RNA sequence: GGGAACGACUCGAGUAGAGUCGAAAAGCUGUUGCCCGGGUUGUAGCUACCGGUGUUGUAGUUGCCGGCGUUGCCGACGCCGGUGUUGGCUAUUCCGGAGUUGAAGAAGCCCGUGUUGGCGUCGCCGAUUGUUCAUUCCUUUCGAGGAAUGAACAAUAAAAGAAACAACAACAACAAC
Reactivity to 2A3 in 0.01 (KOAc 150mM, MgCl2 10mM, bicine 150mM(pH8.5), 24C), signal-to-noise 2, nucleotides 027 to 126: g010c020u030g020u180u110g100c000c010c000g000g020g000u070u000g190u120a030g010c000u070a210c010c010g030g020u000g050u100u080g020u000a050g010u060u210g000c010c010g010g000c010g070u060u090g080c050c110g010a020c000g030c000c000g010g010u030g000u000u070g030g000c000u000a000u130u040c000c000g030g050a080g020u080u150g050a120a110g040a080a020g050c010c010c050g020u020g030u060u130g000g000c000g030u080c050g000c020c050g020
Reactivity to DMS in 0.01 (KOAc 150mM, MgCl2 10mM, bicine 150mM(pH8.5), 24C), signal-to-noise 3, nucleotides 027 to 126: g010c020u000g000u020u010g000c110c060c010g010g030g000u020u010g010u010a040g000c020u000a110c040c010g020g020u010g010u020u010g010u030a040g000u010u010g000c020c010g020g020c010g000u000u020g000c130c070g000a070c020g030c000c030g000g020u000g000u030u020g010g000c000u010a170u020u020c020c000g020g000a100g020u000u010g000a080a090g000a140a090g000c020c000c050g000u020g000u010u000g010g010c060g020u010c030g010c030c010g000

An RNA of 177 nucleotides, treated with 2A3 and DMS and read out base by base. For 2A3, 1,130 sequencing reads were counted. Conditions: 150 mM KOAc, 10 mM MgCl2 and 150 mM bicine (pH 8.5), 24 C. The data come from the RNA Mapping Database (RMDB), library OK1LIB. Values cover nucleotides 27 to 126.